Structure probing data (2A3 and DMS) for a 177-nucleotide construct. DMS (dimethyl sulfate) methylates the pairing face of unpaired adenines and cytosines. The 2A3 profile rests on 10,630 reads. It was measured as part of the RMDB library TTRDEL. The reactions ran in a buffer of 150 mM KOAc, 10 mM MgCl2 and 150 mM bicine (pH 8.5), at 24 C.
[RMDB]
RNA sequence: GGGAACGACUCGAGUAGAGUCGAAAAGAUAUGGACGAUGACCCAAGUCGAUUCAACAGCUCGGAAACGAGCUGCGCAUUUCGUCUUGCAUCGUCCUAAGUCAAAGCUGUUGGUUCGCCAACAGCAAGCCUAUAUGUAGCUUCGGCUACAUAUAGGCAAAAGAAACAACAACAACAAC
Reactivity to 2A3 in 0.01 (KOAc 150mM, MgCl2 10mM, bicine 150mM(pH8.5), 24C), signal-to-noise 3, nucleotides 027 to 126: g030a020u090a040u120g000g000a000c000g010a010u030g110a130c040c070c020a010a000g010u030c000g020a020u090u040c040a060a040c000a030g000c000u010c000g030g050a070a090a080c000g000a000g000c000u000g010c000g000c030a070u020u080u030c010g010u010c000u010u010g010c000a010u010c010g000u000c000c000u020a080a020g020u020c030a060a070a080g000c000u000g000u010u010g040g060u040u100c300g070c120c010a000a000c020a010g010c000a000a000
Reactivity to DMS in 0.01 (KOAc 150mM, MgCl2 10mM, bicine 150mM(pH8.5), 24C), signal-to-noise 4, nucleotides 027 to 126: g010a050u010a300u010g000g010a010c000g030a020u000g000a270c190c300c070a010a020g000u000c000g010a010u000u000c180a160a050c010a010g000c000u000c010g010g000a050a090a150c000g020a010g010c000u000g010c020g000c210a300u000u010u000c000g010u000c000u000u000g000c010a000u000c000g000u000c000c000u000a000a070g000u000c050a060a110a110g000c010u010g010u000u000g000g010u000u000c220g000c010c000a030a000c000a000g010c000a020a040